[RMDB]
RNA sequence: GGGAACGACUCGAGUAGAGUCGAAAAAGAGCUCAGGCAAGCAGCAGCAGUCCCAGACUGGCCGACUGAGGGAAUGGGGGGUGGUUCAGCCUCAGCUCCCUGGGACCUUAUGCAAGGUAGUUCAUCUUCUGGGGCUCAGUGUCCUCAUCUGCAGAGGGAAGUAAAGGGGAUUCGUCCCCUUUACUUCAAAAGAAACAACAACAACAAC
Reactivity to DMS in 0.01 (KOAc 150mM, MgCl2 10mM, bicine 150mM(pH8.5), 24C), signal-to-noise 2, nucleotides 027 to 156: a080g020a140g030c020u010c020a080g050g040c050a060a120g040c030a110g000c030a100g030c070a080g010u000c010c010c010a150g000a040c080u020g010g060c000c010g020a110c040u020g020a040g000g030g010a040a090u000g010g010g010g010g010g020u000g020g040u010u010c050a130g000c020c040u000c040a080g010c050u020c000c020c020u000g000g030g010a090c020c010u000u010a060u010g010c080a040a100g000g010u000a050g010u030u000c090a060u000c070u010u000c050u000g000g020g010g040c070u010c020a040g010u000g000u010c010c020u010c000a090u000c040u000g040c060a130g000a110g020g010
The record gives the reactivity of an RNA of 207 nucleotides to DMS. The DMS profile rests on 3,704 reads. Source: RMDB library OK3TST, as collected in RNAgym.